Structure probing data (DMS and 2A3) for a 177-nucleotide construct. DMS (dimethyl sulfate) methylates the pairing face of unpaired adenines and cytosines. The reactions ran in a buffer of 150 mM KOAc, 10 mM MgCl2 and 150 mM bicine (pH 8.5), at 24 C. Source: RMDB libraries RFM100 and RFMREP, as collected in RNAgym.

RNA sequence: GGGAACGACUCGAGUAGAGUCGAAAAACUCGAUCGUUCAUACCUGAAUACAUAGGGUAUGAAACGCGAAACCCGCUGAAGUGAAACAUCUCAGUAAGCGGAGGAAAAGAAAGAGAAAUCGAUUCCGUAGAUAGAUUUAAUUCGUUAAAUCUAUCUAAAAAGAAACAACAACAACAAC
Reactivity to DMS in 0.01 (KOAc 150mM, MgCl2 10mM, bicine 150mM(pH8.5), 24C), signal-to-noise 9, nucleotides 027 to 126: a090c130u010c010g010a070u010c010g000u000u000c000a010u000a000c010c000u010g000a200a190u010a160c140a020u010a300g000g000g000u000a000u000g010a020a020a030c020g010c100g010a060a120a150c060c000c000g010c020u000g000a150a170g010u010g000a120a150a130c240a090u020c040u000c040a040g010u010a110a040g000c020g000g000a120g000g000a050a050a070a160g000a030a070a090g000a100g000a070a090a070u010c040g000a190u010u010c010c010g010
Reactivity to 2A3 in 0.01 (KOAc 150mM, MgCl2 10mM, bicine 150mM(pH8.5), 24C), signal-to-noise 9, nucleotides 027 to 126: a000c030u020c020g040a100u060c010g010u000u000c000a000u000a000c000c000u020g030a060a030u070a120c040a020u050a030g000g000g010u000a000u000g010a040a020a010c030g010c020g030a080a040a040c000c000c000g000c010u030g020a120a220g140u040g100a060a180a100c080a260u120c020u010c030a010g010u030a020a020g000c010g020g030a100g070g050a050a070a030a030g110a020a070a000g090a010g030a040a080a040u050c030g040a080u040u010c010c010g000